[RMDB]
RNA sequence: GGGAACGACUCGAGUAGAGUCGAAAAGAUAUGGAACGAUAUCGACAUGCUGUACUUCGGAAACGAAGUGACAGCAACAGCGAUCAUCGUUCCUAAGUCAAAACUAUCGACCUUCGGGUCGAUAGAAUCUGUAUACUCUCUUCGGAGAGUAUACAGAAAAAGAAACAACAACAACAAC
Reactivity to 2A3 in 0.01 (KOAc 150mM, MgCl2 10mM, bicine 150mM(pH8.5), 24C), signal-to-noise 3, nucleotides 027 to 126: g010a010u020a010u050g000g000a010a000c020g000a000u000a000u030c040g050a100c120a270u280g000c010u010g010u010a010c000u000u000c010g010g000a010a020a020c000g010a010a010g000u040g200a010c000a000g100c000a020a010c090a050g060c010g000a010u020c030a010u000c150g020u000u000c000c000u010a010a010g020u000c010a000a020a110a180c000u010a000u010c000g020a020c010c000u070u110c300g180g000g000u000c000g000a000u000a000g010a000a080
Reactivity to DMS in 0.01 (KOAc 150mM, MgCl2 10mM, bicine 150mM(pH8.5), 24C), signal-to-noise 4, nucleotides 027 to 126: g000a020u000a260u000g000g010a000a000c000g010a010u010a010u010c000g010a090c150a200u000g000c000u000g000u000a020c000u000u000c000g010g000a070a040a110c000g000a010a010g000u000g010a000c010a000g000c000a020a060c300a200g010c000g000a020u000c230a010u000c000g020u000u000c000c000u000a000a090g000u010c020a110a060a110a190c000u010a020u000c000g010a010c000c010u000u020c270g040g020g010u000c010g010a010u000a000g000a040a060